[RMDB]
RNA sequence: GGGAACGACUCGAGUAGAGUCGAAAAGCGUACUACUCGAUCUUUUGACGAUCAGUACAGCACAAUCCAUCCCAAAUAGGAUGGAUUAGCUGUAUGGGAUCGAUAAGAUCGAGUAUCGCAAAAGACUCGAUUCAUGGUUCGCCAUGAAUCGAGUCAAUGUAAUACUGGUGUUCGCACCAGUAUUACAAAAAGAAACAACAACAACAAC
Reactivity to 2A3 in 0.01 (KOAc 150mM, MgCl2 10mM, bicine 150mM(pH8.5), 24C), signal-to-noise 6, nucleotides 027 to 156: g010c020g040u100a110c070u000a000c000u020c000g000a000u000c010u050u090u070u150g260a150c020g000a000u010c010a020g010u000a010c000a000g000c020a030c150a220a010u000c000c000a000u020c000c010c030a210a300a130u300a110g000g010a000u000g000g000a000u000u000a010g000c000u020g030u010a010u050g120g140g010a000u010c000g030a030u020a060a000g010a010u000c000g000a000g000u000a000u020c000g000c000a000a070a020a080g000a000c000u000c000g000a000u000u000c010a000u000g000g070u040u060c290g040c040c000a000u000g000a000a000u000c000g000a000g000u000c000a000a000
Reactivity to DMS in 0.01 (KOAc 150mM, MgCl2 10mM, bicine 150mM(pH8.5), 24C), signal-to-noise 2, nucleotides 027 to 156: g020c010g020u000a040c110u010a020c010u000c020g000a020u020c000u000u010u000u010g010a240c140g000a000u000c000a240g010u000a010c000a010g010c010a140c170a030a030u000c020c000a010u000c010c000c000a100a200a290u010a010g030g010a020u000g030g000a010u000u000a040g000c000u000g000u000a010u020g000g050g010a010u010c010g040a130u010a000a010g000a010u000c000g010a040g000u000a000u000c020g060c040a090a050a140a120g010a030c000u000c000g000a020u000u000c000a020u000g010g020u000u010c300g020c010c000a000u000g010a010a010u000c020g010a000g000u000c010a000a060